This 177-nucleotide RNA was probed chemically with DMS and 2A3.

RNA sequence: GGGAACGACUCGAGUAGAGUCGAAAACUUAAGGGCGUUUUGAGCAGCCUCGCUCUUGCAUCGCAGUAUAGCCAAUGCAAUUGCUGUCUUUAGUACUUGUGCGGCAACUGCAUGCGCGAUAUUUGCAGAGUAUUUUAGGUUUCGACCUAAAAUACUCAAAAGAAACAACAACAACAAC
Reactivity to DMS in 0.01 (KOAc 150mM, MgCl2 10mM, bicine 150mM(pH8.5), 24C), signal-to-noise 5, nucleotides 027 to 126: c030u030u030a040a030g010g010g000c050g000u000u000u000u020g000a100g020c090a090g010c270c080u020c040g000c030u000c040u000u040g010c040a030u030c150g000c000a030g000u010a040u020a140g010c000c050a080a120u040g000c000a000a000u000u000g000c020u010g010u030c170u030u040u020a070g020u020a040c190u000u010g010u010g010c240g000g010c010a050a030c030u010g000c000a020u000g000c150g000c080g000a040u030a060u010u010u000g010c070a160
Reactivity to 2A3 in 0.01 (KOAc 150mM, MgCl2 10mM, bicine 150mM(pH8.5), 24C), signal-to-noise 9, nucleotides 027 to 126: c040u060u060a020a030g020g010g000c040g050u060u050u130u200g170a080g010c050a030g040c020c020u010c010g010c000u030c000u010u080g010c020a030u030c130g000c010a000g010u040a040u120a240g010c010c010a090a100u230g000c000a000a010u030u010g000c000u010g060u300c140u150u230u200a040g020u030a060c040u040u050g040u080g060c040g000g000c010a020a000c000u010g010c000a000u020g020c030g000c030g060a060u030a100u140u160u080g060c080a050
Source: RMDB library OK1LIB, as collected in RNAgym.